[RMDB]
RNA sequence: GGGAACGACUCGAGUAGAGUCGAAAAGCUAGCAAGUGGUGCCGAUGCGCGCUAAGGCACCACAGCCACCGAUGACCUGUAAGGUGGCAAACAGGUCAGCCAAGAAAAGCGCGCACGCGAAAGCGGACAUCACUGCUGCAUUCGUGCAGCAGUGAUGAAAAGAAACAACAACAACAAC
Reactivity to DMS in 0.01 (KOAc 150mM, MgCl2 10mM, bicine 150mM(pH8.5), 24C), signal-to-noise 2, nucleotides 027 to 126: g000c030u030a140g060c110a160a190g030u000g010g000u000g040c030c000g000a050u020g000c020g000c000g000c020u040a300a290g000g000c000a000c030c000a010c010a000g030c010c000a090c040c000g020a090u010g000a020c010c000u000g010u000a060a090g000g010u040g000g000c110a000a070a100c090a030g000g000u000c030a070g040c130c170a140a160g040a030a080a010a000g000c010g000c000g020c000a040c050g020c010g050a070a080a090g020c000g010g000a290
Reactivity to 2A3 in 0.01 (KOAc 150mM, MgCl2 10mM, bicine 150mM(pH8.5), 24C), signal-to-noise 3, nucleotides 027 to 126: g050c070u080a020g080c090a280a070g000u000g010g000u000g000c010c010g020a020u120g010c000g000c000g010c000u000a010a030g000g000c000a000c000c000a000c000a000g000c020c010a020c010c010g100a170u210g030a050c010c010u050g000u040a000a090g010g010u000g070g000c010a000a030a000c010a000g040g000u030c020a040g050c060c020a100a050g070a090a130a000a000g030c000g030c000g000c000a000c000g030c000g020a120a040a000g000c000g000g030a010
The record gives the reactivity of an RNA of 177 nucleotides to DMS and 2A3. 2A3 adducts were read by reverse transcription with SuperScript II with manganese. Conditions: 150 mM KOAc, 10 mM MgCl2 and 150 mM bicine (pH 8.5), 24 C. For DMS, 2,145 sequencing reads were counted. Reactivities are given for positions 27 through 126. DMS adducts were read by reverse transcription with MarathonRT.